[RMDB]
RNA sequence: GGGAACGACUCGAGUAGAGUCGAAAAUGACUUUCUUCGGAAAGUCAGAGUCAGCGCCCUUAGCUCAGUUGGAUAGAGCAACGACCUUCUAAGUCGUGGGCCGCAGGUUCGAAUCCUGCAGGGCGCGCCAAGUACCCACCUAUUUCGAUAGGUGGAAUUCUUUGUGUUGGUUCGCCAACACAAAGAAAAAAGAAACAACAACAACAAC
Reactivity to DMS in 0.01 (KOAc 150mM, MgCl2 10mM, bicine 150mM(pH8.5), 24C), signal-to-noise 1, nucleotides 027 to 156: u000g000a000c000u040u000u000c000u000u000c200g070g000a000a010a050g000u030c010a000g020a080g010u000c000a230g080c000g010c000c000c000u000u000a160g000c140u000c020a110g040u070u000g070g000a300u000a080g000a040g030c000a140a040c010g000a060c000c030u010u000c300u030a010a060g000u000c010g010u000g060g000g000c000c010g000c000a000g090g000u030u000c060g020a300a000u000c000c000u030g020c000a060g000g000g090c010g000c030g020c030c030a070a270g000u000a080c190c000c000a000c030c000u000a100u010u000u000c110g010a140u000a000g010g020u030g000g010a010a000
Reactivity to 2A3 in 0.01 (KOAc 150mM, MgCl2 10mM, bicine 150mM(pH8.5), 24C), signal-to-noise 1, nucleotides 027 to 156: u030g000a000c000u040u000u000c000u040u020c190g090g020a000a000a000g000u000c000a000g010a000g100u120c040a090g000c030g010c010c000c030u000u010a000g000c010u000c010a020g020u190u060g200g100a260u090a130g020a000g030c000a000a000c000g010a010c020c030u210u140c120u300a120a010g010u030c010g030u030g020g090g020c030c010g000c000a000g000g000u020u030c000g000a020a020u020c000c000u000g000c000a000g000g000g070c000g000c000g000c000c020a060a010g060u080a070c000c000c000a000c020c000u000a030u020u140u070c230g120a000u000a000g020g000u000g010g050a000a020
Chemical mapping of a 207-nucleotide RNA with DMS and 2A3. For 2A3, 686 sequencing reads were counted. The reactions ran in a buffer of 150 mM KOAc, 10 mM MgCl2 and 150 mM bicine (pH 8.5), at 24 C. For 2A3 the reverse transcriptase was SuperScript II with manganese. DMS adducts were read by reverse transcription with MarathonRT. The DMS profile rests on 1,077 reads.